Conditions: 150 mM KOAc, 10 mM MgCl2 and 150 mM bicine (pH 8.5), 24 C.
The record gives the reactivity of an RNA of 177 nucleotides to DMS and 2A3.
Values cover nucleotides 27 to 126.
RNA sequence: GGGAACGACUCGAGUAGAGUCGAAAAUGCGGGCGGCGAUGAAGUGGUGUCGCAAGGCGCAGGAGUUGGGCACCCUCGACGAGGACGCGGCGCGUUGGAUGCGCCGGCAUGGAGGUCCUUAAAUGAAACUUCGUUUCAGGUUCGCCUGAAACGAAGUAAAAGAAACAACAACAACAAC
Reactivity to DMS in 0.01 (KOAc 150mM, MgCl2 10mM, bicine 150mM(pH8.5), 24C), signal-to-noise 2, nucleotides 027 to 126: u030g010c010g010g030g000c100g000g030c070g000a080u030g000a040a060g030u070g010g020u010g000u000c020g010c120a080a100g020g020c030g020c100a070g000g000a050g010u000u000g020g000g010c070a070c070c000c000u010c030g000a150c080g000a020g010g000a040c040g010c030g000g020c000g020c010g010u070u080g020g000a130u020g030c020g020c000c000g000g000c060a080u020g000g000a130g020g010u000c020c040u010u020a000a070a100u060g040a110a090
Reactivity to 2A3 in 0.01 (KOAc 150mM, MgCl2 10mM, bicine 150mM(pH8.5), 24C), signal-to-noise 1, nucleotides 027 to 126: u050g000c040g000g000g000c000g000g000c020g030a100u030g020a300a050g020u030g060g000u030g010u010c020g000c010a000a070g050g000c050g020c000a000g000g060a100g070u080u050g000g000g000c040a070c000c000c000u000c000g070a080c070g040a070g000g000a030c000g010c000g210g000c000g000c000g010u000u300g160g010a160u050g000c000g010c000c000g000g000c090a080u090g130g040a010g070g080u000c020c000u000u010a000a080a130u270g040a000a200